RNA sequence: GGGAACGACUCGAGUAGAGUCGAAAAUGCUUGCCUUGAGAAGCGAAGCUGAGACCCGCUAGUCGAGCGGACUCGUCCCAGCGGUCCCAACUCCUUUUUCUCUAUUCUAAGGCAAUGGACCGUGGAUCUUGGGGGUGUGCCCUAAGGGAGACCUAGACUAGCUUAACAUCUUCGGAUGUUAAGCUAGAAAAGAAACAACAACAACAAC
Reactivity to 2A3 in 0.01 (KOAc 150mM, MgCl2 10mM, bicine 150mM(pH8.5), 24C), signal-to-noise 5, nucleotides 027 to 156: u120g010c000u030u030g030c000c020u160u180g120a140g030a130a000g010c080g040a030a000g000c020u040g020a020g020a060c000c030c020g010c030u090a100g130u130c090g100a010g000c020g000g080a090c000u000c010g070u030c010c000c020a010g010c010g000g000u030c010c020c030a040a100c110u140c010c020u030u050u010u190u110c130u060c030u170a300u300u040c050u090a010a040g010g000c000a040a070u040g000g010a010c000c010g000u030g040g030a050u010c020u020u050g010g000g000g010g020u120g090u150g150c000c000c000u010a040a050g030g030g000a090g020a030c020c020u040a040g030a060
Reactivity to DMS in 0.01 (KOAc 150mM, MgCl2 10mM, bicine 150mM(pH8.5), 24C), signal-to-noise 2, nucleotides 027 to 156: u000g040c080u000u000g020c020c010u000u000g010a240g020a220a110g040c140g000a060a070g010c040u010g010a300g020a130c010c010c060g000c020u000a130g000u000c140g000a170g020c030g030g000a130c040u000c110g010u020c010c010c040a220g030c010g000g030u030c010c000c040a160a080c050u010c010c010u000u000u000u010u040c070u000c090u000a170u020u010c120u000a040a080g000g030c100a090a110u000g010g010a090c030c050g060u000g020g000a110u010c010u000u010g020g030g000g040g000u000g040u000g020c020c010c010u000a060a100g030g050g000a150g030a190c110c010u010a110g000a300